RNA sequence: GGGAACGACUCGAGUAGAGUCGAAAAUUACUGUAUCGGCUUCAAUUGUAUAAACUUUGUGUGGCCGAAAGGGUAACUCCGGCUUAUCACAGUUUGCGUUUUGUUUUAUGCAUUGGUCUACAAAAAGGAUUUGGUCGUGAUUCGUCGUGACUGGGUCAAAAGAAACAACAACAACAAC
Reactivity to 2A3 in 0.01 (KOAc 150mM, MgCl2 10mM, bicine 150mM(pH8.5), 24C), signal-to-noise 9, nucleotides 027 to 126: u050u010a030c010u040g060u110a060u040c010g010g000c000u040u030c030a030a030u070u030g050u040a130u080a160a160a060c020u020u080u040g110u040g010u020g040g000c000c000g020a040a010a000g030g000g010u040a040a030c020u000c020c000g010g000c010u070u100a090u150c020a030c020a100g090u060u120u110g090c040g030u050u040u090u080g140u040u090u050u060a040u050g030c030a020u010u090g030g010u010c030u050a070c090a030a110a030a030a030g100
Reactivity to DMS in 0.01 (KOAc 150mM, MgCl2 10mM, bicine 150mM(pH8.5), 24C), signal-to-noise 9, nucleotides 027 to 126: u010u010a030c030u010g010u020a100u010c020g000g000c010u000u010c020a030a020u010u010g020u010a100u040a070a070a080c030u010u010u010g010u010g030u000g000g010c010c010g000a010a050a090g010g000g010u010a040a060c100u010c140c010g010g020c020u010u010a050u020c030a040c060a100g010u010u010u010g010c180g010u000u010u010u010g010u010u010u010u010a050u010g010c050a080u010u010g000g010u010c030u000a060c130a040a050a080a100a090g000
Structure probing data (2A3 and DMS) for a 177-nucleotide construct. For 2A3, 46,777 sequencing reads were counted. The reactions ran in a buffer of 150 mM KOAc, 10 mM MgCl2 and 150 mM bicine (pH 8.5), at 24 C. The DMS profile rests on 86,117 reads.